Background:
Structure probing data (2A3) for a 207-nucleotide construct. For 2A3 the reverse transcriptase was SuperScript II with manganese. Source: RMDB library M2RFPK, as collected in RNAgym. Conditions: 150 mM KOAc, 10 mM MgCl2 and 150 mM bicine (pH 8.5), 24 C.
RNA sequence: GGGAACGACUCGAGUAGAGUCGAAAAAGAUUCACGCUACGGCGUGGAUCACACGUUCAUCCCUAUUGGGACGGAAGUAGGCAUAGUGCCGAAGGAACGCAUUAGUCAUGCGCUACGGCGCAUGACACACAUCAGAGUCACUUCGGUGACUCUGAAAGUUAUUGCAGGUCUUCGGACCUGCAAUAACAAAAGAAACAACAACAACAAC
Reactivity to 2A3 in 0.01 (KOAc 150mM, MgCl2 10mM, bicine 150mM(pH8.5), 24C), signal-to-noise 2, nucleotides 027 to 156: a000g000a000u000u000c000a000c000g010c000u030a040c260g220g010c000g020u030g000g000a000u000c000a000c000a000c010g000u000u000c000a000u070c000c030c030u180a300u170u300g020g000g000a010c040g020g000a040a020g010u000a000g010g000c010a080u100a190g140u220g260c000c000g020a010a010g040g010a000a000c020g030c040a030u040u160a000g000u000c000a020u000g000c000g000c000u040a040c280g040g000c000g010c000a000u000g000a000c000a000c000a010c000a070u080c010a010g000a010g030u000c000a000c020u020u050c170g100g000u020g000a000c000u020c000u000g000a010a010a000